[RMDB]
RNA sequence: GGGAACGACUCGAGUAGAGUCGAAAAUCUGCGUUCUGUCAGGGCCUGUUUUGGUAAUGCCUUUCUUUCUGUUAUGCGCUACGCUGAUCGUCUGAGUAUAUGGCCUGGCCAUGCUGCCGGGUCAUUUGACUAUACUUCACUUCGGUGAAGUAUAGUCAAAAGAAACAACAACAACAAC
Reactivity to 2A3 in 0.01 (KOAc 150mM, MgCl2 10mM, bicine 150mM(pH8.5), 24C), signal-to-noise 4, nucleotides 027 to 126: u000c000u050g020c010g050u100u030c020u070g090u080c060a070g050g030g020c010c000u090g070u050u110u020u060g090g050u100a080a070u100g060c020c000u060u070u030c050u000u070u000c010u030g090u070u090a100u220g040c060g010c010u000a030c040g040c050u020g020a010u010c000g020u020c050u040g050a050g150u140a100u070a010u260g010g010c000c000u000g000g030c030c030a170u300g050c150u080g000c030c000g010g000g000u010c000a000u010u000u000
Reactivity to DMS in 0.01 (KOAc 150mM, MgCl2 10mM, bicine 150mM(pH8.5), 24C), signal-to-noise 2, nucleotides 027 to 126: u020c020u000g020c090g010u000u010c030u010g000u000c100a060g010g000g010c000c030u000g000u010u010u020u010g010g020u020a090a060u020g000c070c040u000u020u000c030u010u030u000c040u000g000u000u000a030u010g010c030g000c070u020a090c060g040c030u010g010a080u000c050g000u000c010u010g020a170g030u060a060u030a030u000g000g000c000c000u000g000g010c000c080a120u000g010c160u020g010c000c000g010g000g000u000c000a000u020u010u000
Conditions: 150 mM KOAc, 10 mM MgCl2 and 150 mM bicine (pH 8.5), 24 C.
Chemical mapping of a 177-nucleotide RNA with 2A3 and DMS.
Values cover nucleotides 27 to 126.
High 2A3 reactivity points to a flexible backbone, as in loops and unpaired stretches.
For DMS the reverse transcriptase was MarathonRT.